[RMDB]
RNA sequence: GGGAACGACUCGAGUAGAGUCGAAAACGAUGGGCUUGUGGUUACGCUGACCAGAAUUCGGGCCCAUCGAAGCAUGCGUACGACGCUGCACUAAGAUUCUCACAGCUGGGAGACACUGUCGGACCUUGUAAGGGCACCAUCUGCCCGUUACAAGGAAGUCUCGGGAGAGUUUCGACUCUCUCGAGACAAAAGAAACAACAACAACAAC
Reactivity to 2A3 in 0.01 (KOAc 150mM, MgCl2 10mM, bicine 150mM(pH8.5), 24C), signal-to-noise 4, nucleotides 027 to 156: c010g000a000u000g000g020g000c020u050u040g040u040g110g060u010u040a070c100g020c190u180g000a020c010c000a060g120a150a180u220u200c040g020g000g010c010c000c000a000u000c000g000a010a000g000c010a020u240g020c020g010u050a090c120g080a030c020g080c010u010g000c010a040c070u070a120a030g030a160u070u000c030u010c030a070c020a020g020c050u090g010g030g060a070g010a010c050a000c070u050g030u090c020g030g040a100c000c000u020u000g000u000a000a020g000g020g010c000a030c100c040a210u060c050u080g000c000c000c010g070u000u000a000c000a000a000g000g000a000a010
Reactivity to DMS in 0.01 (KOAc 150mM, MgCl2 10mM, bicine 150mM(pH8.5), 24C), signal-to-noise 2, nucleotides 027 to 156: c020g070a000u000g000g040g030c010u000u000g000u000g030g010u000u000a060c110g010c100u000g010a060c000c030a130g000a070a200u000u020c060g010g010g020c000c000c020a020u000c010g000a010a030g020c030a080u000g020c060g010u000a130c060g010a110c020g040c030u000g000c040a220c040u000a100a110g010a170u000u000c010u000c000a120c020a150g010c120u000g000g000g020a100g010a170c070a090c050u010g020u000c020g020g000a190c010c010u000u000g020u010a030a110g010g000g000c020a050c040c240a130u010c190u000g020c000c010c000g040u010u000a040c020a040a030g010g000a060a170
Annotation:
Structure probing data (2A3 and DMS) for a 207-nucleotide construct. It was measured as part of the RMDB library OK3TST. For DMS, 3,086 sequencing reads were counted. For DMS the reverse transcriptase was MarathonRT.